[RMDB]
Chemical mapping of a 177-nucleotide RNA with 2A3 and DMS. For DMS, 2,991 sequencing reads were counted. In probing experiments dimethyl sulfate is read out at A N1 and C N3, which are open when not base-paired. 2A3 adducts were read by reverse transcription with SuperScript II with manganese. For DMS the reverse transcriptase was MarathonRT. 2A3 is a SHAPE reagent: it acylates the 2'-hydroxyl of flexible nucleotides of all four kinds.
RNA sequence: GGGAACGACUCGAGUAGAGUCGAAAAAGCUUCGUACUUUGUUAUGAUGCUCACCAUAUCUUAUAACAAACUAAUUGAUAGUUUGCCUAUAGAUUUGAUGUUUAAUUAAGUUAGGCAUGCUCACCUACAUGAAGUUACUGUUCGCAGUAACUUCAUGAAAAGAAACAACAACAACAAC
Reactivity to 2A3 in 0.01 (KOAc 150mM, MgCl2 10mM, bicine 150mM(pH8.5), 24C), signal-to-noise 1, nucleotides 027 to 126: a000g000c000u000u000c000g000u000a000c030u140u080u190g040u110u010a000u020g010a000u080g000c010u040c030a030c000c010a020u030a000u000c010u020u230a060u000a060a010c040a060a000a000c010u050a040a090u120u190g090a090u080a030g000u020u000u000g000c030c000u070a040u030a030g020a040u070u000u140g080a060u050g060u060u140u150a060a050u070u040a050a050g240u040u020a000g020g060c000a020u060g000c030u030c040a090c020c020u110a080
Reactivity to DMS in 0.01 (KOAc 150mM, MgCl2 10mM, bicine 150mM(pH8.5), 24C), signal-to-noise 3, nucleotides 027 to 126: a030g010c000u000u000c020g030u000a020c020u000u010u010g010u010u010a010u000g020a040u000g020c050u000c040a090c030c000a040u000a010u000c000u000u000a050u000a070a110c010a000a010a010c010u000a010a240u010u020g000a150u000a010g020u000u000u000g010c120c070u000a080u000a030g000a030u000u010u000g020a030u000g000u010u000u010a060a080u010u010a070a170g010u000u000a050g000g000c040a050u000g000c060u000c070a100c040c010u010a140